[RMDB]
RNA sequence: GGGAACGACUCGAGUAGAGUCGAAAAGUUCAUCCCCUGAUCCAGGAUGCCCGAAACGGUGAGGCGGAAAGCAAAUUAAAUAACGUCAACCCAUCGGGACGGUUGGCCAGUUAAGAAGUGAGGAUUCAAAAGAUCGAACCGUUCGCGGUUCGAUCAAGUAGCUUUACUGCUUCGGCAGUAAAGCUACAAAAGAAACAACAACAACAAC
Reactivity to 2A3 in 0.01 (KOAc 150mM, MgCl2 10mM, bicine 150mM(pH8.5), 24C), signal-to-noise 2, nucleotides 027 to 156: g020u060u060c030a050u050c010c000c000c000u020g020a010u030c000c000a060g000g010a070u040g060c020c000c000g000a100a110a060c130g000g020u100g000a180g020g000c030g000g040a070a030a000g120c160a090a150a000u140u170a120a100a040u300a270a020c010g000u000c020a000a000c000c000c020a070u050c000g010g000g010a010c060g010g010u030u010g100g000c000c020a040g020u060u040a110a070g090a080a010g080u060g050a070g050g010a020u130u030c120a070a060a000a010g020a000u000c010g000a010a010c010c000g030u060u060c190g030c000g070g000u000u000c000g000a000u000c000a000a000

The data come from the RNA Mapping Database (RMDB), library M2RFPK. An RNA of 207 nucleotides, treated with 2A3 and read out base by base. The reactions ran in a buffer of 150 mM KOAc, 10 mM MgCl2 and 150 mM bicine (pH 8.5), at 24 C.